An RNA of 177 nucleotides, treated with 2A3 and DMS and read out base by base. The 2A3 profile rests on 2,867 reads. The RNA was probed in 150 mM KOAc, 10 mM MgCl2 and 150 mM bicine (pH 8.5) at 24 C. It was measured as part of the RMDB library TTRDEL. For DMS the reverse transcriptase was MarathonRT.
RNA sequence: GGGAACGACUCGAGUAGAGUCGAAAAGAUAUGGACACAUUCGGGAGACUGAUAGUCGGAAACGACUGCAGUCAUCGAUCGAGAUGUGUCCUAAGUCAAAACCUAAAGCUGUUCGCAGCUUUAGGAAGAAGUAGCACAACUUCGGUUGUGCUACUUCAAAAGAAACAACAACAACAAC
Reactivity to 2A3 in 0.01 (KOAc 150mM, MgCl2 10mM, bicine 150mM(pH8.5), 24C), signal-to-noise 2, nucleotides 027 to 126: g000a000u050a020u090g000g000a000c000a000c000a000u040u060c030g010g050g090a190g000a030c000u000g050a300u100a110g000u000c000g020g000a010a040a000c000g000a010c020u010g040c000a010g060u020c000a030u030c010g100a160u070c020g000a030g000a220u040g000u020g000u010c000c000u010a050a000g010u010c010a010a030a120a270c000c000u020a000a000a000g010c000u020g070u150u210c300g000c150a020g000c000u000u000u000a010g000g000a000a060
Reactivity to DMS in 0.01 (KOAc 150mM, MgCl2 10mM, bicine 150mM(pH8.5), 24C), signal-to-noise 1, nucleotides 027 to 126: g020a020u010a170u020g020g000a010c000a020c000a000u000u000c000g010g000g000a100g010a010c000u000g000a060u010a010g030u000c020g010g000a020a040a090c000g040a010c000u020g000c000a000g010u000c000a110u020c190g000a090u010c010g010a040g000a000u000g010u000g000u000c020c000u010a000a050g020u010c010a100a040a160a100c010c000u000a000a000a000g000c010u000g020u000u010c210g030c000a020g010c000u000u000u000a000g000g010a020a040